[RMDB]
RNA sequence: GGGAACGACUCGAGUAGAGUCGAAAAGUUCGGGCCUUCGGGCCCGAACAAAUAAUCCACCCUGGAAAGGCUGGAGCCUAAACUAUGGAAAAGGCACCAUAGAAACCACAUGGUUCGCCAUGUGGAAUCAAGUCAUAAACUUCGGUUUAUGACUUGAAAAAGAAACAACAACAACAAC
Reactivity to DMS in 0.01 (KOAc 150mM, MgCl2 10mM, bicine 150mM(pH8.5), 24C), signal-to-noise 2, nucleotides 027 to 126: g010u000u000c010g010g030g030c000c000u000u040c300g050g030g030c000c000c000g010a010a010c000a010a080a060u000a080a120u000c030c040a030c300c000c000u000g000g020a160a150a040g000g020c130u000g000g000a050g040c030c020u000a060a020a160c010u020a000u000g000g000a070a050a120a180g000g020c180a080c020c000a010u010a030g010a180a140a130c000c000a000c000a010u010g000g000u000u010c240g010c000c000a000u000g020u000g000g000a060a040